The record gives the reactivity of an RNA of 207 nucleotides to 2A3.
RNA sequence: GGGAACGACUCGAGUAGAGUCGAAAAGGGGUCUUCUUCCGUUGAGGUCAGGACAUGCUCUGAAGCCUCCACGGAGCAACAGCCUGACUCCCCACCAACGGAGAAGACGGAGGCACCCAAAGUGUAUCUCUAACACUUCGGUGUUAGAGAUACACAACAGCAUACUACCGUUCGCGGUAGUAUGCUGAAAAGAAACAACAACAACAAC
Reactivity to 2A3 in 0.01 (KOAc 150mM, MgCl2 10mM, bicine 150mM(pH8.5), 24C), signal-to-noise 2, nucleotides 027 to 156: g110g010g000g030u000c020u030u010c010u300u100c020c010g000u030u010g010a060g040g030u010c000a010g000g020a070c090a160u260g000c000u000c000u000g050a100a050g010c000c010u000c010c000a010c030g000g010a000g040c010a050a050c050a070g190c000c000u010g010a000c030u080c090c010c010c000a080c030c000a000a000c000g020g000a010g010a030a000g000a000c010g000g000a000g010g000c000a060c010c000c000a090a070a020g000u000g010u000a000u030c000u000c000u000a000a000c010a020c000u040u080c240g170g010u010g000u010u000a000g000a010g000a000u000a000c000a010c000a000a020
The 2A3 profile rests on 1,610 reads. The reactions ran in a buffer of 150 mM KOAc, 10 mM MgCl2 and 150 mM bicine (pH 8.5), at 24 C.